Structure probing data (2A3 and DMS) for a 177-nucleotide construct. For DMS, 54,868 sequencing reads were counted. Source: RMDB library OK1LIB, as collected in RNAgym.
[RMDB]
RNA sequence: GGGAACGACUCGAGUAGAGUCGAAAAUUGCUCGCCCAAGGUGAGCGCGCGGUAGAAGCGAUCGCGACGGCGACCGGGAUGAACCUGACCACGGCAUCGGCGAAUCUGCAGGCGCUGAAGAGCGGCGAAUGCGAUCAAUAUUCGUAUUGAUCGCAUUAAAAGAAACAACAACAACAAC
Reactivity to 2A3 in 0.01 (KOAc 150mM, MgCl2 10mM, bicine 150mM(pH8.5), 24C), signal-to-noise 9, nucleotides 027 to 126: u120u100g010c010u010c030g020c000c030c040a090a060g060g010u060g030a040g010c030g000c010g000c020g020g060u100a040g040a190a020g050c030g050a060u060c020g010c010g050a100c030g050g020c010g030a060c020c010g020g010g020a050u090g050a060a070c020c020u050g040a060c020c030a060c050g030g000c020a040u030c030g040g000c030g020a030a050u020c010u060g020c020a060g050g000c010g000c020u010g020a070a030g050a030g050c010g010g000c010g030
Reactivity to DMS in 0.01 (KOAc 150mM, MgCl2 10mM, bicine 150mM(pH8.5), 24C), signal-to-noise 9, nucleotides 027 to 126: u040u030g010c030u000c030g020c010c020c110a120a140g020g040u010g000a060g010c020g020c060g000c030g000g000u000a050g010a110a090g010c040g010a050u010c030g010c030g010a160c090g000g010c030g010a080c060c010g000g010g010a080u010g010a110a120c060c010u010g000a090c060c050a090c060g010g000c060a170u000c040g000g000c040g000a120a080u010c020u010g000c050a080g010g000c040g010c020u000g000a090a070g010a070g000c040g010g010c060g000